[RMDB]
RNA sequence: GGGAACGACUCGAGUAGAGUCGAAAAGAUAUGGAAAGGUUACUGGACGAUGGUGUCGGAAACGACACUCAUCGAUGGAAGGUACCUUUCCUAAGUCAAAAGUGCGAAGUCUUCGGACUUCGCACAAGAACCAUAUUUCCUUCGGGAAAUAUGGUUCAAAAGAAACAACAACAACAAC
Reactivity to DMS in 0.01 (KOAc 150mM, MgCl2 10mM, bicine 150mM(pH8.5), 24C), signal-to-noise 2, nucleotides 027 to 126: g000a050u000a030u020g000g010a000a000a010g000g020u010u000a030c000u000g020g030a110c000g020a010u000g030g000u000g000u000c000g010g000a020a010a020c010g020a000c000a010c040u010c010a000u000c000g020a150u020g010g020a280a300g010g010u000a040c000c000u000u000u000c000c000u020a000a090g000u010c010a130a110a140a140g020u000g020c000g000a020a030g020u000c000u000u030c290g030g000a020c000u000u010c000g000c020a000c020a020a070
Reactivity to 2A3 in 0.01 (KOAc 150mM, MgCl2 10mM, bicine 150mM(pH8.5), 24C), signal-to-noise 2, nucleotides 027 to 126: g010a000u010a030u020g010g000a030a000a000g050g010u190u300a020c010u060g110g190a150c020g010a000u000g040g000u000g000u000c010g010g020a000a010a000c000g000a000c010a000c050u070c020a010u000c000g030a030u160g300g140a040a000g020g000u000a010c010c020u000u020u000c000c000u000a000a010g000u000c010a000a000a150a200g010u000g030c010g020a010a010g000u010c000u130u260c300g050g000a000c000u020u020c000g040c010a000c000a010a010